An RNA of 177 nucleotides, treated with 2A3 and read out base by base.
Reactivities are rounded to 0.1 and cut off at 0 and 3.
RNA sequence: GGGAACGACUCGAGUAGAGUCGAAAACUUUCCGAUGCUGACGACGGCGGCCGGAACGGUGAAGCCGGCCACGGUGCUGGUGCUCGGCGUCGGCGUGGCCGGCCUGCAGGCGCUGGCGACGGCCAAAAUAUGUAGGCGCAUUCGUGCGCCUACAUAUAAAAGAAACAACAACAACAAC
Reactivity to 2A3 in 0.01 (KOAc 150mM, MgCl2 10mM, bicine 150mM(pH8.5), 24C), signal-to-noise 2, nucleotides 027 to 126: c040u030u030u000c000c000g040a040u170g000c030u020g000a040c000g000a000c000g020g000c020g020g070c000c000g060g040a180a100c110g020g150u160g130a100a000g020c000c000g000g020c000c000a040c040g060g100u110g010c030u020g000g070u100g010c130u050c140g070g000c000g030u020c000g070g000c010g020u030g040g000c000c000g000g000c000c000u010g010c010a050g080g060c070g020c050u020g000g010c050g050a100c020g000g000c010c010a000a150a010